[RMDB]
RNA sequence: GGGAACGACUCGAGUAGAGUCGAAAAUGCAUAAUGCUGAGCAGCGUCGUCAUAUAUUCACUUAUUAUUCAAUAUAGAGUAGACACCAAAACUCAAUGUAUUUCUGAGGAAGCGUGGUGCAUAAUGCGUCGACACUAUUAUUCGUAAUAGUGUCGACAAAAGAAACAACAACAACAAC
Reactivity to 2A3 in 0.01 (KOAc 150mM, MgCl2 10mM, bicine 150mM(pH8.5), 24C), signal-to-noise 4, nucleotides 027 to 126: u090g000c010a010u030a060a040u160g000c030u030g010a020g030c010a010g030c010g070u030c030g020u010c080a010u060a010u010a010u180u070c020a020c080u060u090a070u130u060a140u140u280c020a030a050u060a030u020a190g030a040g090u080a030g040a060c030a020c020c010a010a050a050a040c040u040c030a000a040u090g100u080a170u140u160u010c090u040g040a030g020g020a040a030g020c040g060u060g010g000u030g000c020a040u110a110a050u160g040c050
Reactivity to DMS in 0.01 (KOAc 150mM, MgCl2 10mM, bicine 150mM(pH8.5), 24C), signal-to-noise 3, nucleotides 027 to 126: u000g010c040a080u000a100a040u020g000c020u010g000a100g030c080a070g000c060g000u010c040g030u020c080a070u000a170u000a060u000u000c060a110c110u010u000a080u000u010a110u010u020c040a050a060u010a070u010a100g010a070g000u000a090g010a110c050a050c020c050a030a060a110a100c020u000c020a040a030u000g000u020a060u020u010u000c120u020g010a040g000g010a110a060g020c100g010u000g010g040u000g010c060a020u020a030a060u000g020c210